[RMDB]
RNA sequence: GGGAACGACUCGAGUAGAGUCGAAAAGCAGGCGAGCCAAGAAUGCGUUUUAACAACGUAUCCUUUCCACAUACUAUUUGCAUUGCACAGCGAUAGUAUGGAUGGGACAUUGGUAUUUACAGUACUAACUAAUAGAGCUGUUCGCAGCUCUAUUAGUAAAAGAAACAACAACAACAAC
Reactivity to DMS in 0.01 (KOAc 150mM, MgCl2 10mM, bicine 150mM(pH8.5), 24C), signal-to-noise 9, nucleotides 027 to 126: g010c070a050g000g030c060g010a080g010c030c050a050a030g010a110a040u000g010c000g000u010u000u010u040a110a150c250a020a010c020g000u010a050u000c010c010u000u010u000c010c040a110c120a050u000a050c010u000a010u000u010u020g070c000a070u010u030g010c240a130c250a140g000c010g000a010u000a000g000u000a000u000g000g000a070u000g000g000g000a060c300a080u010u010g010g010u000a040u020u010u020a100c160a100g000u010a040c040u010a080
Reactivity to 2A3 in 0.01 (KOAc 150mM, MgCl2 10mM, bicine 150mM(pH8.5), 24C), signal-to-noise 9, nucleotides 027 to 126: g070c050a010g080g000c020g040a010g010c000c010a040a020g050a050a030u070g020c010g010u010u010u040u110a170a110c140a010a010c010g020u030a050u050c000c010u020u040u020c010c020a050c010a050u010a000c000u010a030u030u080u300g040c050a080u080u260g080c140a070c080a090g000c010g000a000u000a000g000u000a000u010g010g020a020u030g010g000g010a010c030a100u020u070g010g020u050a140u040u140u080a080c060a020g030u030a040c020u040a130
The data come from the RNA Mapping Database (RMDB), libraries RFM100 and RFMREP. The record gives the reactivity of an RNA of 177 nucleotides to DMS and 2A3. The RNA was probed in 150 mM KOAc, 10 mM MgCl2 and 150 mM bicine (pH 8.5) at 24 C. 2A3 adducts were read by reverse transcription with SuperScript II with manganese.